The record gives the reactivity of an RNA of 177 nucleotides to 2A3 and DMS. For DMS, 1,758 sequencing reads were counted. Source: RMDB library OK2TST, as collected in RNAgym.
[RMDB]
RNA sequence: GGGAACGACUCGAGUAGAGUCGAAAAUUCAUCAUUAUUGUCAUCCUCCUUGGAUAUGCAGGCCUCAUGUUACUCACCAAUGUCCUUAAGGCAAUUGGGGUCUGGGGAUCAUGGGUAAUAGCUCCAAACCAGUUUUACCAUUCGUGGUAAAACUGGUAAAAGAAACAACAACAACAAC
Reactivity to 2A3 in 0.01 (KOAc 150mM, MgCl2 10mM, bicine 150mM(pH8.5), 24C), signal-to-noise 2, nucleotides 027 to 126: u080u020c020a030u020c020a020u070u110a060u100u260g090u030c000a040u000c000c030u020c010c020u050u040g030g000a040u080a080u260g000c010a020g000g090c000c000u100c040a000u010g030u020u120a050c010u010c030a150c000c010a010a060u040g040u020c040c020u120u190a180a140g000g010c010a100a300u040u020g070g040g030g020u000c060u050g020g010g000g010a020u010c010a020u050g000g010g010u050a110a070u040a060g040c030u020c010c000a100a010
Reactivity to DMS in 0.01 (KOAc 150mM, MgCl2 10mM, bicine 150mM(pH8.5), 24C), signal-to-noise 2, nucleotides 027 to 126: u000u000c060a050u010c050a130u000u000a080u000u000g000u010c050a110u000c050c010u020c050c050u010u000g010g000a060u000a030u020g010c060a140g000g000c100c010u010c030a010u000g000u010u010a130c060u000c020a050c020c020a030a030u020g010u000c010c060u010u000a170a200g000g010c020a030a080u000u000g010g000g020g020u000c280u010g010g010g010g000a040u000c020a030u000g000g000g000u020a110a100u000a080g010c080u000c030c020a040a080
Reactivities are rounded to 0.1 and cut off at 0 and 3. The RNA was probed in 150 mM KOAc, 10 mM MgCl2 and 150 mM bicine (pH 8.5) at 24 C.